[RMDB]
RNA sequence: GGGAACGACUCGAGUAGAGUCGAAAAGCACUGACCUCCUCCCUCUCAUUCCUCCAAGAGGUGGGACUCACCCCGAUUGUCCUGCACGGCGCCGGUCCCCAAUUGGAUGAAGAACUCACUGCUGUCGUCGCCGGCAUUACUUCGGUAAUGCCGGCGAAAAAGAAACAACAACAACAAC
Reactivity to 2A3 in 0.01 (KOAc 150mM, MgCl2 10mM, bicine 150mM(pH8.5), 24C), signal-to-noise 1, nucleotides 027 to 126: g030c010a000c030u080g050a050c000c010u000c020c020u070c000c000c000u040c000u000c020a050u100u040c000c020u020c000c010a180a060g100a000g020g090u050g010g060g000a020c020u010c120a090c000c000c010c000g100a110u000u200g050u030c080c000u050g090c000a040c160g090g000c040g000c060c000g060g000u020c020c000c000c000a000a150u000u080g000g010a070u060g000a020a050g030a060a040c060u040c060a030c060u160g050c030u040g100u100c020g020